[RMDB]
RNA sequence: GGGAACGACUCGAGUAGAGUCGAAAACAAGGUAUCACCAGCACAGCUCAGCCCCUGGUGGCAGGCACAGCCAAUGGUGGAAAAGUCACUUUUACCAAAGUGCUAACCGGCACACCCCUUCGACCAGGUGUAGGUUAGCUUUCGAGCUAACCUACACAAAAGAAACAACAACAACAAC
Reactivity to 2A3 in 0.01 (KOAc 150mM, MgCl2 10mM, bicine 150mM(pH8.5), 24C), signal-to-noise 2, nucleotides 027 to 126: c050a030a030g060g000u070a040u150c000a030c040c020a030g010c020a050c010a040g030c020u030c130a070g040c010c000c000c030u060g020g090u080g000g000c010a030g040g020c040a010c040a120g020c000c030a110a130u090g030g010u040g040g050a000a100a000a000g140u160c010a030c080u070u090u080u160a070c050c060a100a070a000g000u010g000c020u000a060a020c040c020g000g060c040a020c000a000c010c030c000c000u080u070c040g040a050c060c020a040g090
Reactivity to DMS in 0.01 (KOAc 150mM, MgCl2 10mM, bicine 150mM(pH8.5), 24C), signal-to-noise 2, nucleotides 027 to 126: c110a090a050g010g000u010a070u000c010a050c040c030a060g010c020a100c190a070g010c040u000c080a230g020c030c000c020c070u010g000g000u000g010g010c080a060g030g010c030a070c120a080g000c000c030a070a090u000g000g050u020g010g000a070a060a080a080g000u000c160a040c050u000u000u000u020a110c200c100a040a050a050g010u000g000c040u000a060a070c120c040g000g000c050a090c050a240c030c060c000c040u020u010c060g000a100c070c060a070g000